[RMDB]
RNA sequence: GGGAACGACUCGAGUAGAGUCGAAAAAACGCCUUCCCCGAAUAAUUUCGGGCAGUCCUUGCCCGCGGAGGGCACUUAAGGCUCCGGGGCCCGGGGCAGAGUCGGCCCUCCCAGAGCCCGCCGACGCUGAUUUAAGAAGUUUCGACUUCUUAAAUCAAAAAGAAACAACAACAACAAC
Reactivity to DMS in 0.01 (KOAc 150mM, MgCl2 10mM, bicine 150mM(pH8.5), 24C), signal-to-noise 3, nucleotides 027 to 126: a100a060c140g000c010c010u000u010c040c010c050c040g010a090a080u030a070a130u010u010u020c050g010g000g010c090a040g010u020c120c080u010u000g010c000c000c030g030c240g000g000a070g030g000g000c010a070c070u000u030a080a120g010g000c020u020c020c000g000g020g020g010c180c070c070g000g010g010g000c030a070g000a030g000u020c120g020g030c000c000c020u000c010c010c100a060g010a080g000c010c020c050g040c030c030g010a050c100g000c110
Reactivity to 2A3 in 0.01 (KOAc 150mM, MgCl2 10mM, bicine 150mM(pH8.5), 24C), signal-to-noise 3, nucleotides 027 to 126: a000a000c060g040c000c000u030u020c010c000c000c000g050a070a040u170a160a140u100u160u130c010g000g000g000c000a010g060u160c020c030u100u070g010c000c000c000g020c010g020g020a030g000g000g030c020a010c010u060u090a120a050g070g000c000u000c010c020g050g000g140g060c000c110c000g000g000g000g000c020a030g020a010g120u120c100g060g010c000c000c000u040c000c000c000a000g000a010g000c000c020c020g020c020c020g020a050c020g000c060